[RMDB]
RNA sequence: GGGAACGACUCGAGUAGAGUCGAAAAUCAGUUCUAAGCAGUGUAUAUCAGAUGCAUUAUUACAAGCAGCUAUUUGUUGAUCAAAUGGAAUGUUGAUUGAUAGCAACUGAUUCAGGACAGAAUUGUACUGAUAUUAGCGUUUCGACGCUAAUAUCAGAAAAGAAACAACAACAACAAC
Reactivity to 2A3 in 0.01 (KOAc 150mM, MgCl2 10mM, bicine 150mM(pH8.5), 24C), signal-to-noise 5, nucleotides 027 to 126: u060c010a010g000u000u010c030u060a120a040g020c040a050g070u040g070u130a070u050a000u240c000a000g020a040u030g000c010a040u050u110a040u100u120a110c050a100a040g020c030a020g010c020u020a070u050u070u050g070u050u160g160a120u220c020a000a020a040u040g040g020a120a140u030g010u030u040g080a100u020u070g010a010u010a010g000c010a020a070c000u000g020a030u020u030c030a010g030g040a010c010a030g100a040a040u120u090g020u060a090
Reactivity to DMS in 0.01 (KOAc 150mM, MgCl2 10mM, bicine 150mM(pH8.5), 24C), signal-to-noise 5, nucleotides 027 to 126: u010c030a070g010u000u010c020u000a070a140g000c060a120g010u000g020u010a160u010a080u000c000a020g010a150u000g000c020a060u000u010a050u010u010a090c170a110a060g010c050a040g010c010u000a030u000u000u000g010u000u000g010a160u020c010a020a020a020u000g010g000a070a060u000g010u010u000g000a230u010u000g010a020u000a080g030c060a060a050c020u000g000a030u000u000c090a040g010g000a090c080a050g000a040a060u000u000g010u010a190
This 177-nucleotide RNA was probed chemically with 2A3 and DMS. 2A3 adducts were read by reverse transcription with SuperScript II with manganese. The data come from the RNA Mapping Database (RMDB), library OK2TST.